An RNA of 177 nucleotides, treated with 2A3 and DMS and read out base by base. 2A3 is a SHAPE reagent: it acylates the 2'-hydroxyl of flexible nucleotides of all four kinds. The data come from the RNA Mapping Database (RMDB), library OK2TST.

[RMDB]
RNA sequence: GGGAACGACUCGAGUAGAGUCGAAAAAAAAUCUAAACAAUUUAUAGCAUUUUAGUUGCUACUUUGCUCCUCUAGAGGGCAGCAAGUAGUUAUGGCCCUCAUCGGUCCCAAGAUACUAUUGCUCUCGUAUUUAAUGGACUUUCGAGUCCAUUAAAUAAAAAGAAACAACAACAACAAC
Reactivity to 2A3 in 0.01 (KOAc 150mM, MgCl2 10mM, bicine 150mM(pH8.5), 24C), signal-to-noise 1, nucleotides 027 to 126: a000a050a010a040u050c020u110a120a140a010c020a070a060u110u260u110a220u300a100g020c000a010u000u070u000u110a040g020u050u030g010c000u000a010c020u100u050u150g000c020u000c010c010u070c020u090a110g040a100g090g020g010c000a000g050c010a000a010g010u040a020g000u060u090a020u060g000g000c000c000c020u030c040a020u020c010g050g030u000c010c010c040a010a010g050a050u100a020c070u070a070u140u050g000c020u000c000u010c100g020
Reactivity to DMS in 0.01 (KOAc 150mM, MgCl2 10mM, bicine 150mM(pH8.5), 24C), signal-to-noise 2, nucleotides 027 to 126: a100a030a050a040u020c020u020a120a060a140c030a090a040u010u020u000a110u000a090g020c030a030u000u000u010u000a070g000u000u000g000c000u000a020c050u000u000u000g000c000u000c010c010u000c090u020a180g010a110g010g000g010c170a020g010c020a010a010g000u000a000g000u010u000a030u000g000g000c070c010c010u010c190a060u000c120g010g020u000c010c060c040a090a120g000a080u010a030c080u000a070u000u010g000c060u000c020u000c090g010